[RMDB]
Record summary:
The record gives the reactivity of an RNA of 207 nucleotides to 2A3. The reactions ran in a buffer of 150 mM KOAc, 10 mM MgCl2 and 150 mM bicine (pH 8.5), at 24 C. The data come from the RNA Mapping Database (RMDB), library OK3TST. Values cover nucleotides 27 to 156.
RNA sequence: GGGAACGACUCGAGUAGAGUCGAAAAACACCGAAGGCGAUCACGUUUCGCGGUGAGCAAUACGGCCCGCGCCCGUUCGGGAUCGGCGGUAUCGCAAUGUCAAGUGACGGCACGGUAGAAAAGCCAACGCUGACGGUUAGCAAUAUUGAUGCGCAAGAGUUCAGGACAUUUUCGAAUGUCCUGAACUAAAAGAAACAACAACAACAAC
Reactivity to 2A3 in 0.01 (KOAc 150mM, MgCl2 10mM, bicine 150mM(pH8.5), 24C), signal-to-noise 1, nucleotides 027 to 156: a000c010a000c000c010g050a130a050g080g000c010g070a020u030c000a010c160g030u030u130u040c010g020c010g010g100u180g060a220g000c050a040a030u140a300c120g100g000c000c000c000g000c000g010c020c050c000g160u180u250c170g000g000g060a080u140c010g050g000c000g000g010u020a050u030c020g000c010a030a090u100g010u010c010a060a080g000u020g100a000c030g020g000c020a030c140g030g000u120a080g090a120a110a040a010g010c000c080a050a060c050g000c010u000g030a000c050g070g040u060u110a030g040c020a020a020u030a050u250u120g080a070u080g000c060g030c130a100a000g030
For 2A3 the reverse transcriptase was SuperScript II with manganese.